[RMDB]
RNA sequence: GGGAACGACUCGAGUAGAGUCGAAAAAUAAAGAGCGUACAUCUCUGUCAGACUGUACGACAGUCUGACUCUCUCGUACAAUCGCUCAACGAGAGAGAGAGAGCGUUCAAAGAAGCGAGAAAAAAAACGAAGUAAUUUAGUUCGCUAAAUUACUUCGAAAAGAAACAACAACAACAAC
Reactivity to 2A3 in 0.01 (KOAc 150mM, MgCl2 10mM, bicine 150mM(pH8.5), 24C), signal-to-noise 3, nucleotides 027 to 126: a010u230a020a200a020g010a000g000c010g020u030a050c040a300u000c000u000c020u030g090u010c000a000g000a020c000u040g020u180a150c140g100a060c130a000g000u000c000u000g000a010c000u000c000u000c000u010c000g040u040a050c100a110a270u070c040g000c020u010c020a010a000c000g000a000g000a010g000a000g000a000g000a000g010a020g000c010g000u000u030c080a090a030a000g090a020a000g030c010g010a020g010a160a040a010a010a010a000a010a020
Reactivity to DMS in 0.01 (KOAc 150mM, MgCl2 10mM, bicine 150mM(pH8.5), 24C), signal-to-noise 3, nucleotides 027 to 126: a100u030a060a070a160g020a020g000c010g010u010a110c160a160u000c010u000c030u000g020u000c010a010g010a010c010u000g000u010a110c300g010a160c000a000g010u010c010u000g010a300c000u000c010u010c000u010c000g020u000a070c150a050a050u000c040g030c020u000c040a210a020c000g000a010g000a010g000a010g010a050g010a010g020a120g000c010g000u000u010c010a060a060a060g000a070a020g010c030g010a030g050a010a000a010a050a060a030a050a210
An RNA of 177 nucleotides, treated with 2A3 and DMS and read out base by base.
Conditions: 150 mM KOAc, 10 mM MgCl2 and 150 mM bicine (pH 8.5), 24 C.
2A3 adducts were read by reverse transcription with SuperScript II with manganese.
Source: RMDB library M2PK90, as collected in RNAgym.
DMS adducts were read by reverse transcription with MarathonRT.
Values cover nucleotides 27 to 126.